[RMDB]
RNA sequence: GGGAACGACUCGAGUAGAGUCGAAAACGUUAUCUAAGAUGGAGGUGCGGGUGAAGAUGUGAGUGUGUAGAGUUGGUGCGAUGCAUGGAAGUUAAUGACGAGUGCGAGUAGUUAGCUAUGAGUAUGAAUGGUGAAAACAGUUCGCUGUUUUCACCAUAAAAGAAACAACAACAACAAC
Reactivity to DMS in 0.01 (KOAc 150mM, MgCl2 10mM, bicine 150mM(pH8.5), 24C), signal-to-noise 5, nucleotides 027 to 126: c120g010u010u010a100u020c040u010a110a090g010a090u020g010g010a110g000g010u010g010c070g000g000g020u010g000a080a040g010a090u000g010u010g020a080g010u010g010u020g000u010a080g010a080g010u010u010g020g010u030g000c070g000a070u000g000c070a040u020g000g010a080a040g010u010u010a050a080u000g010a060c090g000a120g010u010g020c050g000a120g030u010a040g010u000u000a060g020c040u020a070u000g010a090g020u020a060u010g000a140
Reactivity to 2A3 in 0.01 (KOAc 150mM, MgCl2 10mM, bicine 150mM(pH8.5), 24C), signal-to-noise 2, nucleotides 027 to 126: c020g030u070u120a090u110c090u090a000a110g020a080u130g010g060a100g030g000u100g080c050g000g090g050u020g030a030a020g040a030u090g020u020g040a020g020u090g000u000g000u060a010g010a000g080u000u050g000g010u010g000c000g000a030u010g020c030a000u070g000g030a040a020g000u080u130a140a030u140g020a030c010g020a030g100u030g060c010g020a010g040u040a000g000u010u110a020g000c020u010a030u140g050a020g020u180a050u110g140a190